[RMDB]
RNA sequence: GGGAACGACUCGAGUAGAGUCGAAAACCAAGGUAGUUCGCUACCUUGGAAAGAAAGCUCGAGCGAAGGGAAGGGAAAGGACGCUCGAGCAACCCACCCAAUAAAGAGCAUGCUUCGGCAUGCUCAACCUCUCUUCCAUCUUCGGAUGGAAGAGAGGAAAAGAAACAACAACAACAAC
Reactivity to 2A3 in 0.01 (KOAc 150mM, MgCl2 10mM, bicine 150mM(pH8.5), 24C), signal-to-noise 1, nucleotides 027 to 126: c010c000a010a010g000g010u000a000g000u010u070c190g000c120u010a010c000c010u000u000g000g020a020a040a010g060a050a080a000g020c010u000c000g000a000g000c030g050a070a060g120g040g040a090a140g100g010g050a100a240a000g100g010a000c010g000c000u010c000g000a000g000c000a000a010c000c000c000a020c000c040c010a060a050u170a180a160a010g000a010g010c000a000u010g000c020u090u100c250g060g000c000a000u000g000c020u030c000a010a010